[RMDB]
RNA sequence: GGGAACGACUCGAGUAGAGUCGAAAAACGGUCAUAUACGUAUGACCGAAUGAGCAUAACAGGGCCACCCCAAAGCGUUCACAUUGUGGCCCCUGUCAGAUUCUGGUAAAUCCGCGAGUUCUGCUAAAUUAGGUAACUCUCUUCGGAGAGUUACCAACUGUUGGUAAAAGUUCGCUUUUACCAACAGAAAAGAAACAACAACAACAAC
Reactivity to 2A3 in 0.01 (KOAc 150mM, MgCl2 10mM, bicine 150mM(pH8.5), 24C), signal-to-noise 5, nucleotides 027 to 156: a000c010g000g000u000c010a000u020a010u040a030c130g080u020a000u010g000a000c000c000g030a000a050u060g010a010g050c060a060u060a220a050c010a030g000g010g000c010c000a020c000c040c020c040a050a170a050g070c070g100u180u140c090a080c040a220u120u170g000u020g020g010c030c050c020c000u020g030u040c010a020g020a120u110u030c010u070g010g020u050a080a090a090u060c020c010g060c050g050a030g040u050u020c030u060g020c030u060a050a090a150u190u110a060g000g000u000a000a000c000u000c000u000c000u060u070c110g040g000a000g010a000g000u000u000a000c000c000a000a000
Reactivity to DMS in 0.01 (KOAc 150mM, MgCl2 10mM, bicine 150mM(pH8.5), 24C), signal-to-noise 2, nucleotides 027 to 156: a120c030g020g000u000c000a030u010a060u000a100c230g000u000a020u010g010a010c000c010g000a020a020u000g000a140g040c090a120u000a080a050c050a020g010g040g020c010c040a040c040c030c020c030a030a130a150g060c050g010u010u000c090a070c080a160u020u000g030u000g000g010c000c000c020c040u000g000u030c040a030g000a140u010u000c020u000g010g000u010a080a020a060u010c020c020g030c050g000a150g000u000u000c160u010g030c000u000a090a070a180u000u010a070g020g030u000a010a010c010u000c000u010c010u000u000c300g030g000a020g000a020g010u000u010a000c000c010a000a020
Background: The record gives the reactivity of an RNA of 207 nucleotides to 2A3 and DMS. The RNA was probed in 150 mM KOAc, 10 mM MgCl2 and 150 mM bicine (pH 8.5) at 24 C.